[RMDB]
RNA sequence: GGGAACGACUCGAGUAGAGUCGAAAAUCAGUUAAGCCUUGGUGGUGUCACGACAUCCGGGUCGAAAAUCUAGUGAAUCGCCGUAGUGCAGCGUGUUCGUCCGCGUCGCUACGGUUAAAUCAAAUGACAGAACUAAACAUGUAGAACUGGUCGUAGACUAUAUCCAGCACUUCGGUGCUGGAUAUAGAAAAGAAACAACAACAACAAC
Reactivity to DMS in 0.01 (KOAc 150mM, MgCl2 10mM, bicine 150mM(pH8.5), 24C), signal-to-noise 1, nucleotides 027 to 156: u000c050a120g020u000u010a020a110g030c030c040u000u010g020g030u000g050g080u000g010u000c070a040c020g030a060c030a020u010c000c040g030g000g010u030c010g030a150a040a130a120u010c010u010a070g040u000g020a180a070u000c080g000c010c000g040u000a000g080u010g000c130a080g020c010g020u020g040u000u010c250g000u000c110c000g020c030g020u000c070g050c000u000a000c040g070g010u020u000a020a050a140u010c080a130a090a070u000g030a090c010a010g030a300a060c010u000a080a090a070c030a080u010g070u010a150g030a070a050c010u000g030g000u000c040g000u010a130g010a210
Reactivity to 2A3 in 0.01 (KOAc 150mM, MgCl2 10mM, bicine 150mM(pH8.5), 24C), signal-to-noise 2, nucleotides 027 to 156: u120c010a020g100u170u140a120a000g000c010c000u010u000g030g010u020g050g020u060g020u040c000a000c000g020a000c000a000u000c000c010g020g000g070u080c040g080a070a040a000a060u140c130u140a020g040u000g030a000a010u050c000g030c020c000g020u000a000g000u000g030c070a020g000c000g000u060g020u060u040c000g040u000c000c000g000c020g020u000c000g000c000u000a000c000g010g000u000u000a000a000a010u110c020a000a000a040u100g010a000c090a130g060a020a000c000u040a070a100a000c110a100u110g110u180a040g070a060a020c090u040g000g090u050c030g110u070a040g010a020

An RNA of 207 nucleotides, treated with DMS and 2A3 and read out base by base.
Conditions: 150 mM KOAc, 10 mM MgCl2 and 150 mM bicine (pH 8.5), 24 C.
In probing experiments dimethyl sulfate is read out at A N1 and C N3, which are open when not base-paired.
For DMS the reverse transcriptase was MarathonRT.
The data come from the RNA Mapping Database (RMDB), library ARCHII.